An RNA of 207 nucleotides, treated with DMS and 2A3 and read out base by base. DMS adducts were read by reverse transcription with MarathonRT. The DMS profile rests on 3,186 reads.
RNA sequence: GGGAACGACUCGAGUAGAGUCGAAAAACACGAUCUCGUUCGUUCGUUCUCGAACGAGAGAACGUACACUCGAGAGAGUGAGAACACUCGAGUUCGAACGAUCACACACGAGUGUGUACGUGAACGAGAACUCUCGUUCUCGUGAGUGUGUUCGUUCUCAGAGUUUAAGCUUCGGCUUAAACUCUGAAAAAGAAACAACAACAACAAC
Reactivity to DMS in 0.01 (KOAc 150mM, MgCl2 10mM, bicine 150mM(pH8.5), 24C), signal-to-noise 2, nucleotides 027 to 156: a100c050a080c020g010a200u010c010u000c010g040u010u000c000g030u000u000c120g050u000u000c040u000c000g010a120a080c090g000a110g010a040g010a050a060c030g040u010a040c000a030c000u000c000g030a200g000a130g000a270g010u000g040a120g000a110a070c080a090c000u000c070g010a180g000u010u010c000g000a050a060c000g020a200u000c000a090c040a030c010a130c160g010a190g000u030g040u000g030u000a040c060g000u000g000a090a020c000g000a120g000a120a110c110u000c090u000c070g020u000u000c010u000c000g010u010g070a120g000u000g010u000g040u010u000c030g000u000u000c010
Reactivity to 2A3 in 0.01 (KOAc 150mM, MgCl2 10mM, bicine 150mM(pH8.5), 24C), signal-to-noise 4, nucleotides 027 to 156: a000c040a010c020g040a060u040c010u000c000g060u100u020c050g000u040u010c020g010u050u020c060u020c010g050a240a120c130g040a050g000a000g000a150a000c010g000u010a000c000a020c030u020c010g000a020g000a010g000a010g020u000g000a050g040a020a030c050a010c000u020c010g030a030g020u080u090c030g010a000a000c000g010a050u020c010a000c000a000c000a010c040g100a130g120u150g020u100g080u140a010c010g000u020g010a010a000c010g000a000g060a090a070c070u070c000u010c290g010u010u000c030u010c010g010u040g000a060g010u000g010u010g010u010u020c010g000u010u010c020